[RMDB]
RNA sequence: GGGAACGACUCGAGUAGAGUCGAAAAGAUAUGGAACGUCGUGGACAUGCCUAUCGGAUCGGAAACGAUCCGUAAGGGCAACAGCCACACGUUCCUAAGUCAAAAGUGGAGACUUCGGUCUCCACAAUCGAGAUUCACUGUUCGCAGUGAAUCUCGAAAAAGAAACAACAACAACAAC
Reactivity to DMS in 0.01 (KOAc 150mM, MgCl2 10mM, bicine 150mM(pH8.5), 24C), signal-to-noise 1, nucleotides 027 to 126: g000a000u000a100u080g030g000a010a040c010g000u020c300g020u000g040g000a030c080a300u010g010c000c000u000a180u000c010g000g010a000u010c000g050g010a010a000a020c020g010a000u000c000c050g010u010a050a110g000g000g000c070a030a030c190a130g000c010c020a000c020a050c000g010u000u000c000c000u000a000a040g000u000c020a070a080a160a200g010u000g010g000a000g000a030c000u010u000c210g000g010u000c000u010c000c010a000c000a010a020
Reactivity to 2A3 in 0.01 (KOAc 150mM, MgCl2 10mM, bicine 150mM(pH8.5), 24C), signal-to-noise 1, nucleotides 027 to 126: g020a000u040a040u080g000g000a010a020c010g000u150c120g000u040g070g040a050c240a300u300g000c000c010u060a060u080c000g000g030a010u000c010g030g000a000a030a000c000g000a000u060c000c000g010u050a100a140g090g000g000c080a020a030c120a040g000c000c000a000c000a000c050g020u000u010c000c000u010a000a000g000u000c000a000a100a160a050g000u000g010g000a000g000a010c000u120u110c300g150g010u040c000u020c000c000a010c010a010a000
The record gives the reactivity of an RNA of 177 nucleotides to DMS and 2A3. The data come from the RNA Mapping Database (RMDB), library TTRDES. For DMS, 826 sequencing reads were counted.